[RMDB]
RNA sequence: GGGAACGACUCGAGUAGAGUCGAAAAGCUUGGGCUGAGCAUCUGUCUCCUUUAGCUUGGAGGGCUCAGGGGAUGAGGUCUGGGUGUAAGAACCAGGAGUCUUGUGCCAGGUGCGGUGGCUCACGCCACACACUUCUUUUUUCGAAAAGAAGUGUGUAAAAGAAACAACAACAACAAC
Reactivity to 2A3 in 0.01 (KOAc 150mM, MgCl2 10mM, bicine 150mM(pH8.5), 24C), signal-to-noise 9, nucleotides 027 to 126: g010c030u020u020g010g020g000c020u040g030a010g000c010a010u010c010u030g070u020c050u070c030c000u040u080u070a020g010c020u060u080g190g140a130g040g120g000c010u020c060a010g000g000g000g030a060u150g030a020g020g030u030c020u040g050g040g010u080g030u090a090a070g030a070a040c010c010a020g020g020a050g090u030c020u060u100g040u080g060c010c010a010g000g020u020g000c010g030g190u100g030g000c000u010c010a010c030g020c020c000
Reactivity to DMS in 0.01 (KOAc 150mM, MgCl2 10mM, bicine 150mM(pH8.5), 24C), signal-to-noise 9, nucleotides 027 to 126: g010c040u000u000g010g000g010c020u000g000a240g010c020a040u000c030u000g000u010c020u000c010c010u000u000u010a060g010c070u000u010g020g010a130g010g010g010c010u010c300a040g010g010g010g010a080u010g010a060g010g010u000c020u000g000g000g010u000g010u010a120a140g010a090a090c020c010a060g010g000a070g010u010c020u000u000g020u000g010c170c010a030g010g010u000g000c030g000g030u000g000g010c010u000c030a040c110g010c020c120

The record gives the reactivity of an RNA of 177 nucleotides to 2A3 and DMS.
For DMS the reverse transcriptase was MarathonRT.
Reactivities are given for positions 27 through 126.
The reactions ran in a buffer of 150 mM KOAc, 10 mM MgCl2 and 150 mM bicine (pH 8.5), at 24 C.